[RMDB]
The record gives the reactivity of an RNA of 207 nucleotides to DMS and 2A3. Values cover nucleotides 27 to 156. For 2A3 the reverse transcriptase was SuperScript II with manganese.
RNA sequence: GGGAACGACUCGAGUAGAGUCGAAAAUGCUUCAAGAGAGAAGGAGAACAAGGGGCCGAGAUAGUCCAGGAGGAAAGUUCCUAAUACAUGACCUCAAUUAUAAGAUAGAGGGUAGAAUGAAUAGGAAUUUGAAAAUAUUUAACAUCCUAUCAUACUACCACUGCAUUUAGUUCGCUAAAUGCAGUGGAAAAGAAACAACAACAACAAC
Reactivity to DMS in 0.01 (KOAc 150mM, MgCl2 10mM, bicine 150mM(pH8.5), 24C), signal-to-noise 1, nucleotides 027 to 156: u000g000c040u000u010c120a080a080g030a140g020a060g010a060a060g000g000a190g010a110a070c060a070a150g110g020g040g040c010c020g000a170g040a130u000a060g000u000c020c010a010g020g000a130g030g030a060a090a040g010u000u010c000c010u000a010a150u000a090c060a120u000g010a100c020c010u000c000a030a080u000u000a160u010a060a190g020a260u010a120g000a040g040g000g000u000a090g010a190a070u020g000a140a020u000a080g000g010a000a120u020u000u000g000a060a050a140a140u000a090u010u000u000a100a050c010a100u000c000c000u000a070u000c020a060u000a120c030u020a120
Reactivity to 2A3 in 0.01 (KOAc 150mM, MgCl2 10mM, bicine 150mM(pH8.5), 24C), signal-to-noise 2, nucleotides 027 to 156: u040g000c020u040u040c090a080a010g040a000g010a000g000a080a000g040g000a010g010a040a040c010a010a000g010g010g020g010c000c040g030a030g040a140u090a000g040u030c040c080a020g000g040a000g000g040a060a010a000g010u010u010c020c000u050a110a050u060a160c070a050u100g060a050c000c000u000c010a010a000u240u100a090u130a190a000g050a120u150a070g020a040g030g010g010u010a060g030a170a010u020g000a010a000u000a000g040g000a030a010u070u070u150g050a090a050a040a010u260a070u090u180u070a080a100c040a030u010c000c000u020a020u050c020a010u050a040c000u050a030
Conditions: 150 mM KOAc, 10 mM MgCl2 and 150 mM bicine (pH 8.5), 24 C. DMS adducts were read by reverse transcription with MarathonRT.